This 207-nucleotide RNA was probed chemically with 2A3. The RNA was probed in 150 mM KOAc, 10 mM MgCl2 and 150 mM bicine (pH 8.5) at 24 C. Reactivities are rounded to 0.1 and cut off at 0 and 3. For 2A3 the reverse transcriptase was SuperScript II with manganese.
RNA sequence: GGGAACGACUCGAGUAGAGUCGAAAAAAUACGCUCCACAUUCACAGAUCGUCUAACUCAUAAAUGGUCAGAUCAAAUAAGGCUAAGCCAUCUACAGUUUCCAGAGUCAUUAUUUGGUAAGUCCAGGAAAGUCACAUGUAGCAUGAUUGUGAAGCUAACUACCGCAGCAUUUCGAUGCUGCGGUAGUAAAAGAAACAACAACAACAAC
Reactivity to 2A3 in 0.01 (KOAc 150mM, MgCl2 10mM, bicine 150mM(pH8.5), 24C), signal-to-noise 1, nucleotides 027 to 156: a000a000u220a030c070g000c080u080c000c000a020c020a070u120u120c040a030c100a130g080a240u040c000g130u000c080u040a090a040c000u020c100a230u170a300a050a080u020g000g020u000c000a010g020a130u000c000a000a000a000u010a040a000g010g000c030u030a090a000g050c060c040a090u070c040u140a060c050a210g080u080u250u140c040c020a100g000a000g190u000c000a180u000u090a030u020u050u050g000g000u030a080a030g000u050c000c050a030g120g020a040a040a000g000u080c080a030c000a050u060g030u050a030g030c040a020u170g030a060u040u000g000u000g000a050a000g000c000u000a020